[RMDB]
This 207-nucleotide RNA was probed chemically with 2A3. It was measured as part of the RMDB library RNAMAK. For 2A3 the reverse transcriptase was SuperScript II with manganese. The RNA was probed in 150 mM KOAc, 10 mM MgCl2 and 150 mM bicine (pH 8.5) at 24 C.

RNA sequence: GGGAACGACUCGAGUAGAGUCGAAAAGGGGUCAAUACCUACCGUGGGAACUACUUCGCAGAUAUACUGAAGCCUCCACGGUAUGUAGAAGCCCACGAUGGUAUUGACGGAGGCACCCAAAGUUCGCGUAGUAAUGUUCGCAUUACUACGCGAACAAGACGUGUAAUUCCUUCGGGAAUUACACGUCAAAAGAAACAACAACAACAAC
Reactivity to 2A3 in 0.01 (KOAc 150mM, MgCl2 10mM, bicine 150mM(pH8.5), 24C), signal-to-noise 2, nucleotides 027 to 156: g040g010g050g010u030c000a000a000u000a010c020c000u080a130c150c000g000u050g000g000g010a120a120c080u110a030c020u220u110c110g060c210a100g070a210u180a010u020a180c010u020g040a120a040g020c000c000u050c030c000a040c040g020g000u000a010u040g000u000a050g020a110a040g020c000c010c000a000c000g030a070u140g000g020u000a000u010u040g010a010c030g000g020a000g020g030c000a020c000c000c010a080a090a010g000u010u000c000g020c000g000u000a000g000u000a000a000u000g020u020u040c190g000c100a000u000u000a000c000u000a000c000g000c000g000a000a000c000a000a010